[RMDB]
RNA sequence: GGGAACGACUCGAGUAGAGUCGAAAAGGUGGCAGCGCUUCUCCAGGGCAAGGUGAGGGGAAGCCCAGUGAUGGGAGUGCUGCCUGGAGAGGAGUCAGUUCCAGUGGUGGGGGCCCUGGGCUUUGGCCCGUUGUACACUCUUCGGAGUGUACAACGGAAAAGAAACAACAACAACAAC
Reactivity to 2A3 in 0.01 (KOAc 150mM, MgCl2 10mM, bicine 150mM(pH8.5), 24C), signal-to-noise 2, nucleotides 027 to 126: g140g050u070g000g000c010a000g020c050g000c020u060u000c050u010c040c030a000g030g010g010c080a080a050g050g040u210g100a150g000g030g000g030a070a050g020c010c000c010a090g030u140g100a160u200g020g010g000a010g020u000g010c010u010g000c010c010u020g010g070a100g030a060g010g140a020g020u030c050a030g020u030u030c000c000a020g000u070g100g160u120g010g000g010g040g030c000c000c010u010g000g030g030c040u120u040u050g030g020c040
Reactivity to DMS in 0.01 (KOAc 150mM, MgCl2 10mM, bicine 150mM(pH8.5), 24C), signal-to-noise 2, nucleotides 027 to 126: g000g010u010g020g010c010a050g000c040g020c010u010u000c050u000c030c010a090g010g010g020c040a150a060g010g010u000g020a180g000g000g000g010a140a200g010c020c000c010a050g030u010g000a200u000g010g010g000a060g010u000g010c000u000g000c010c010u000g000g010a100g010a150g000g010a040g020u000c030a090g010u000u000c010c020a050g000u020g010g010u000g010g010g000g000g030c030c020c050u010g000g000g010c150u000u000u000g010g020c100